[RMDB]
RNA sequence: GGGAACGACUCGAGUAGAGUCGAAAAAUAGAGGAAGUAUUAGGAAACUGGGGCACAACAAUAAUACGUGUUCCACAACUUUCAGCGCGGGUGUGUCUUCUUUUCCUGCUUGAGAUAGCGCUAUGUCCUUCUAACAGUGGUUCGCCACUGUUAGAAGAAAAGAAACAACAACAACAAC
Reactivity to 2A3 in 0.01 (KOAc 150mM, MgCl2 10mM, bicine 150mM(pH8.5), 24C), signal-to-noise 2, nucleotides 027 to 126: a000u110a030g020a020g000g030a020a010g000u100a120u190u200a060g130g000a080a010a030c030u020g010g020g000g010c030a010c000a020a110c030a080a120u190a190a040u110a160c090g000u000g010u020u000c010c010a010c000a010a020c010u030u170u180c050a020g060c000g000c040g010g070g050u060g010u010g020u030c040u030u000c000u050u070u010u010c010c000u030g030c090u090u130g040a070g040a110u140a070g020c020g000c060u040a100u110g100u070c010
Reactivity to DMS in 0.01 (KOAc 150mM, MgCl2 10mM, bicine 150mM(pH8.5), 24C), signal-to-noise 2, nucleotides 027 to 126: a030u010a060g010a060g000g000a060a050g010u000a110u000u000a130g000g000a070a060a070c180u010g030g020g000g010c030a040c020a100a120c210a150a140u000a060a110u000a090c180g020u010g010u000u000c010c020a050c080a080a080c050u000u010u000c110a080g010c050g000c030g010g000g010u000g020u010g010u000c010u000u000c030u010u000u000u000c000c000u000g000c150u000u000g020a060g000a090u010a050g010c000g000c050u010a060u000g000u000c120
Structure probing data (2A3 and DMS) for a 177-nucleotide construct.
The reactions ran in a buffer of 150 mM KOAc, 10 mM MgCl2 and 150 mM bicine (pH 8.5), at 24 C.
For 2A3, 1,715 sequencing reads were counted.
2A3 adducts were read by reverse transcription with SuperScript II with manganese.
Reactivities are given for positions 27 through 126.